[RMDB]
RNA sequence: GGGAACGACUCGAGUAGAGUCGAAAAGUCACGAGGAGACUCGUGACAGCAUGCUUCGGCAUGCAAGGGUCGGCAUGGCAUCUCCACCUCCUCGCGGUCCGACCUGGGCAUCCGAAGGAGGACGCACGUCCACUCGGAUGUAGAACGGAGAGCCAAAUAGUAAUUAGCCAUUCGUGGCUAAUUACUAAAAAGAAACAACAACAACAAC
Reactivity to DMS in 0.01 (KOAc 150mM, MgCl2 10mM, bicine 150mM(pH8.5), 24C), signal-to-noise 2, nucleotides 027 to 156: g000u010c010a030c020g010a000g030g030a300g000a160c010u000c000g040u040g000a010c020a080g010c000a030u000g000c020u010u000c300g050g040c000a020u010g020c020a030a060g040g020g010u000c010g030g000c200a150u000g000g010c000a150u010c020u010c000c000a110c050c000u000c050c010u020c020g020c110g040g040u000c010c000g010a130c030c000u010g000g030g000c020a060u020c010c000g000a080a170g000g010a150g050g000a040c010g000c150a110c130g050u000c000c000a040c060u000c000g000g000a040u000g000u010a060g010a080a040c120g010g000a130g000a300g020c010c000a030a130a210
Reactivity to 2A3 in 0.01 (KOAc 150mM, MgCl2 10mM, bicine 150mM(pH8.5), 24C), signal-to-noise 4, nucleotides 027 to 156: g000u010c000a000c000g000a010g000g030a090g020a050c000u000c000g000u000g000a000c010a000g000c000a010u010g010c010u060u050c220g140g000c010a010u010g000c020a050a150g000g020g000u000c010g010g000c120a120u090g030g000c020a160u030c000u000c000c000a010c010c010u040c010c020u080c050g020c110g020g000u010c010c000g000a000c010c000u020g020g060g020c010a000u010c000c010g060a100a080g020g030a200g010g010a020c020g060c140a090c180g020u000c000c000a010c000u020c020g000g000a000u000g010u020a030g020a020a000c030g000g000a000g000a000g000c000c000a010a050a000

Background:
Chemical mapping of a 207-nucleotide RNA with DMS and 2A3. The DMS profile rests on 2,694 reads. Source: RMDB library OK3TST, as collected in RNAgym. For DMS the reverse transcriptase was MarathonRT. The RNA was probed in 150 mM KOAc, 10 mM MgCl2 and 150 mM bicine (pH 8.5) at 24 C.